[RMDB]
RNA sequence: GGGAACGACUCGAGUAGAGUCGAAAACUAGUGAGCAAAGACAGCAAAACGAGGUGAUAUGUAGACCAAGGGGCCGAAUGUACUGGCUUUAAUUCAAAGCUUAGAUAUAAGCAGGAACCAUGCAAGUAAACUUUUGGAUUCAUAUUUGCUAAGUGAACCGUAUAGCUGAGUUCGCUCAGCUAUACGGAAAAGAAACAACAACAACAAC
Reactivity to DMS in 0.01 (KOAc 150mM, MgCl2 10mM, bicine 150mM(pH8.5), 24C), signal-to-noise 1, nucleotides 027 to 156: c010u010a090g030u000g000a060g020c020a040a100a120g020a060c040a160g000c010a010a050a100a140c020g010a110g000g040u050g010a090u030a020u000g030u000a060g020a040c060c040a090a090g060g000g000g030c030c070g020a070a110u010g010u000a060c120u020g010g040c040u000u000u050a060a130u000u020c080a040a060a080g030c030u000u000a020g000a100u020a060u020a050a140g010c010a300g000g010a020a080c050c040a040u000g010c020a040a080g020u000a090a120a060c030u000u000u000u000g010g010a160u010u000c010a010u000a130u010u000u030g070c000u010a000a300g040u000g000a260a170
Reactivity to 2A3 in 0.01 (KOAc 150mM, MgCl2 10mM, bicine 150mM(pH8.5), 24C), signal-to-noise 2, nucleotides 027 to 156: c030u030a040g080u030g090a040g040c050a100a070a000g050a130c060a050g030c030a100a020a050a020c010g010a010g010g040u050g010a000u000a010u180g030u060a020g070a100c020c020a020a000g010g000g000g000c060c000g080a030a020u090g010u110a040c100u010g020g060c000u080u090u040a120a100u170u210c050a050a060a000g030c000u060u110a030g030a120u100a040u020a130a040g020c020a010g070g030a000a060c030c000a010u050g000c010a050a050g040u140a120a050a040c010u080u070u140u060g030g030a050u020u050c000a040u040a130u200u160u160g030c060u070a060a120g030u090g100a050a040

Overview: Conditions: 150 mM KOAc, 10 mM MgCl2 and 150 mM bicine (pH 8.5), 24 C. Structure probing data (DMS and 2A3) for a 207-nucleotide construct. The data come from the RNA Mapping Database (RMDB), library OK3TST. For 2A3 the reverse transcriptase was SuperScript II with manganese. For DMS, 1,536 sequencing reads were counted.